[RMDB]
Chemical mapping of a 207-nucleotide RNA with DMS and 2A3. The DMS profile rests on 1,366 reads. The 2A3 profile rests on 1,038 reads. It was measured as part of the RMDB library OK3TST. Values cover nucleotides 27 to 156. The RNA was probed in 150 mM KOAc, 10 mM MgCl2 and 150 mM bicine (pH 8.5) at 24 C. For 2A3 the reverse transcriptase was SuperScript II with manganese.

RNA sequence: GGGAACGACUCGAGUAGAGUCGAAAAGACACAACUAGAAAGAUUUUCCUUUGUCUCUGCAUUUCAAGAGAAAGCUUCUCUAGUCACAGUCAUGUAAAAUGUAAAACUCUUGAGUACAAAUGAAGGAAUUCUGCAGAGCUUAAAUAAAUACAGGCUACAGCAUCAGUAUGUUCGCAUACUGAUGCUGAAAAGAAACAACAACAACAAC
Reactivity to DMS in 0.01 (KOAc 150mM, MgCl2 10mM, bicine 150mM(pH8.5), 24C), signal-to-noise 1, nucleotides 027 to 156: g000a100c040a060c070a080a050c060u000a070g000a110a070a080g000a080u010u000u000u000c000c030u000u000u000g000u020c000u020c030u010g050c080a150u010u020u000c030a000a100g000a000g040a070a030a110g000c040u000u000c110u000c030u000a080g040u010c080a180c060a300g010u020c030a160u010g010u000a040a020a120a140u000g000u000a030a070a020a080c010u010c020u000u000g000a070g000u010a150c040a050a030a100u020g000a090a060g000g010a110a100u000u000c020u020g010c050a060g000a090g000c070u010u000a040a070a110u000a060a060a090u000a130c040a100g010g000c010u010a100
Reactivity to 2A3 in 0.01 (KOAc 150mM, MgCl2 10mM, bicine 150mM(pH8.5), 24C), signal-to-noise 3, nucleotides 027 to 156: g030a000c020a000c010a100a120c050u090a030g020a090a080a040g030a090u060u090u100u060c030c000u110u030u140g140u040c010u000c000u040g020c030a060u080u170u140c000a010a000g030a000g010a060a090a000g000c030u110u070c020u000c020u140a060g030u050c040a030c060a090g110u100c070a030u070g010u070a010a170a080a110u070g050u080a020a060a160a080c000u000c000u060u040g030a010g020u040a110c030a100a280a160u180g020a100a020g090g010a000a040u090u040c040u100g010c000a010g000a020g050c010u080u060a140a060a030u160a020a050a030u160a040c120a020g120g010c020u170a020